[RMDB]
RNA sequence: GGGAACGACUCGAGUAGAGUCGAAAACGCUUUAUGCGCUUGAGGUCGCGCUAGACCGCUAUGUAUUUACUGAUAUUCAGCGCGUCAUUCACUUAUUGCCUGCUGGCGAGCGUAUCAUGAUGCAACACACCACGCCACAUUUCGAUGUGGCGUGGUGAAAAGAAACAACAACAACAAC
Reactivity to 2A3 in 0.01 (KOAc 150mM, MgCl2 10mM, bicine 150mM(pH8.5), 24C), signal-to-noise 1, nucleotides 027 to 126: c040g020c040u060u010u070a060u160g000c000g010c030u040u110g020a000g000g060u050c050g000c030g000c030u070a100g020a040c020c000g000c020u030a050u150g040u020a030u020u200u150a170c050u090g040a020u000a030u060u090c070a000g000c000g000c030g020u050c010a150u090u050c040a030c140u150u100a080u170u200g010c000c010u040g120c010u070g040g120c020g030a030g000c020g020u030a000u040c070a040u060g190a030u220g040c000a130a000c070a010
Reactivity to DMS in 0.01 (KOAc 150mM, MgCl2 10mM, bicine 150mM(pH8.5), 24C), signal-to-noise 1, nucleotides 027 to 126: c080g010c060u020u040u000a070u010g030c020g000c020u000u010g020a270g010g000u010c030g000c070g040c120u010a040g030a020c080c040g010c110u000a050u010g020u000a030u000u000u000a160c130u020g010a080u000a040u010u000c070a020g000c010g020c010g010u010c020a030u000u020c050a150c150u030u000a100u040u020g000c030c020u010g040c140u000g000g000c050g000a020g010c000g030u000a030u010c090a070u000g000a080u020g020c020a130a110c100a070
Structure probing data (2A3 and DMS) for a 177-nucleotide construct. DMS adducts were read by reverse transcription with MarathonRT. The RNA was probed in 150 mM KOAc, 10 mM MgCl2 and 150 mM bicine (pH 8.5) at 24 C.